[RMDB]
RNA sequence: GGGAACGACUCGAGUAGAGUCGAAAAAUCCAUUUGGAGAAGUGGUUUUCAAUAGUUUACUUGAAUUAGAUGGUAUUGAUUUCAAGGGAUCACAUCCAAGUCCUCCUCCAGCAAUAACAGCAUUAGGGCCUAUUUUGCAAUUCGUUGCAAAAUAGGCAAAAGAAACAACAACAACAAC
Reactivity to 2A3 in 0.01 (KOAc 150mM, MgCl2 10mM, bicine 150mM(pH8.5), 24C), signal-to-noise 3, nucleotides 027 to 126: a000u050c040c000a070u110u040u000g090g010a080g020a230a050g030u030g080g010u000u000u020u050c030a060a070u100a250g150u070u060u150a100c000u000u000g070a050a050u130u050a230g100a180u100g180g000u270a110u130u080g100a060u000u130u090c020a000a000g050g010g010a010u030c070a020c010a030u040c020c000a020a020g070u040c000c000u000c000c000u000c000c060a010g000c030a120a050u150a110a090c070a090g110c000a060u060u060a020g100g000
Reactivity to DMS in 0.01 (KOAc 150mM, MgCl2 10mM, bicine 150mM(pH8.5), 24C), signal-to-noise 2, nucleotides 027 to 126: a070u030c020c030a140u000u000u000g010g010a150g000a090a030g000u020g000g000u000u000u000u040c080a150a100u050a130g010u000u020u010a080c020u000u000g000a060a040u000u030a090g020a120u020g020g000u000a300u010u020g040a070u010u010u020c050a030a100g060g010g000a010u030c020a050c010a140u000c000c000a040a100g000u000c030c000u010c000c000u000c030c000a060g060c130a060a070u090a030a040c100a030g010c110a060u020u050a040g000g000